[RMDB]
RNA sequence: GGGAACGACUCGAGUAGAGUCGAAAAGACGGAAAAGAUCGAACCUAAGAACAUCAGGAAUUGUGAGCCGAAUCCUAGGGCUCCUAGGCACGCAUCGUCCGAUGCGAAAUAAACACUAACGUCGAAAAUCCAUAUGAUAGUUCGCUAUCAUAUGGAUAAAAGAAACAACAACAACAAC
Reactivity to DMS in 0.01 (KOAc 150mM, MgCl2 10mM, bicine 150mM(pH8.5), 24C), signal-to-noise 8, nucleotides 027 to 126: g010a030c020g000g000a050a070a070a080g000a080u000c090g010a080a190c010c020u020a080a070g010a100a100c150a090u030c080a030g000g010a060a080u010u000g000u040g000a080g010c040c010g000a090a060u010c040c030u010a070g010g000g020c050u010c010c020u000a030g010g010c230a190c010g000c020a000u000c000g020u060c170c130g000a010u000g010c000g000a010a050a070u030a070a060a050c080a060c100u010a070a120c060g000u010c040g020a040a050a070
Reactivity to 2A3 in 0.01 (KOAc 150mM, MgCl2 10mM, bicine 150mM(pH8.5), 24C), signal-to-noise 9, nucleotides 027 to 126: g010a000c020g040g040a090a050a030a040g080a050u100c060g040a070a090c000c010u050a080a040g070a110a070c060a110u140c060a040g050g130a120a130u170u100g070u110g050a010g010c010c010g040a060a060u030c020c030u060a060g050g030g030c000u010c000c010u030a020g020g010c050a010c070g000c000a020u010c030g270u120c100c160g010a010u020g000c010g030a030a020a040u130a020a080a000c050a010c080u080a090a010c020g020u010c010g050a070a010a000